The record gives the reactivity of an RNA of 207 nucleotides to 2A3. The 2A3 profile rests on 586 reads.

RNA sequence: GGGAACGACUCGAGUAGAGUCGAAAAUGUAGAUGGUGAGGGCAUGUGUGUGACCUGUUAGAGCGGAGGGCAGACCCCCACACAGCAAUAAGACUCGCCUACCAGCUGUGUGCUAGAAUAUUACACAUAUCCAUUGAGAUGAAAUAAGGGGGGAAAAGCAAGGGUAACAUUUCGAUGUUACCCUUGCAAAAGAAACAACAACAACAAC
Reactivity to 2A3 in 0.01 (KOAc 150mM, MgCl2 10mM, bicine 150mM(pH8.5), 24C), signal-to-noise 1, nucleotides 027 to 156: u230g000u020a000g010a060u100g010g100u100g030a090g050g100g020c140a110u070g090u010g010u000g120u140g060a090c000c060u080g030u100u050a060g000a000g070c040g000g000a030g030g030g000c030a030g010a180c000c000c010c000c000a020c000a000c000a000g010c080a000a150u080a130a050g060a140c020u010c080g030c010c010u170a050c000c070a010g010c000u000g000u010g010u000g020c010u000a000g000a060a040u100a090u090u140a030c070a000c000a060u110a040u090c000c110a000u070u120g060a210g000a190u000g010a140a010a000u120a140a120g010g010g000g000g010g050a090a000a090a000
The reactions ran in a buffer of 150 mM KOAc, 10 mM MgCl2 and 150 mM bicine (pH 8.5), at 24 C. The data come from the RNA Mapping Database (RMDB), library OK3TST.